An RNA of 177 nucleotides, treated with 2A3 and read out base by base. High 2A3 reactivity points to a flexible backbone, as in loops and unpaired stretches. It was measured as part of the RMDB library OK2TST. 2A3 adducts were read by reverse transcription with SuperScript II with manganese. The 2A3 profile rests on 738 reads. The reactions ran in a buffer of 150 mM KOAc, 10 mM MgCl2 and 150 mM bicine (pH 8.5), at 24 C. Values cover nucleotides 27 to 126.

[RMDB]
RNA sequence: GGGAACGACUCGAGUAGAGUCGAAAAACGACGCAGUUACUCAACAAGACCACACUUCUACUCCGCAUUGCUCAUCGCUAUGCCGUAGGUGAGGAUGAUGAGCGCUCUAAAUCCGUUGAGGUGGAACCUACCAUGCUCGCUUCGGCGAGCAUGGUAGAAAAGAAACAACAACAACAAC
Reactivity to 2A3 in 0.01 (KOAc 150mM, MgCl2 10mM, bicine 150mM(pH8.5), 24C), signal-to-noise 1, nucleotides 027 to 126: a000c020g080a000c030g020c030a000g060u100u070a080c030u010c170a120a110c050a100a040g080a100c050c050a030c010a030c050u180u000c000u040a060c070u000c010c020g050c050a080u030u140g010c010u000c020a050u000c000g000c020u070a130u300g060c030c030g200u150a130g020g030u060g060a040g060g030a120u040g010a040u010g030a010g000c060g050c020u000c030u050a100a180a090u020c040c080g030u000u140g020a060g000g000u060g040g000a000a000c010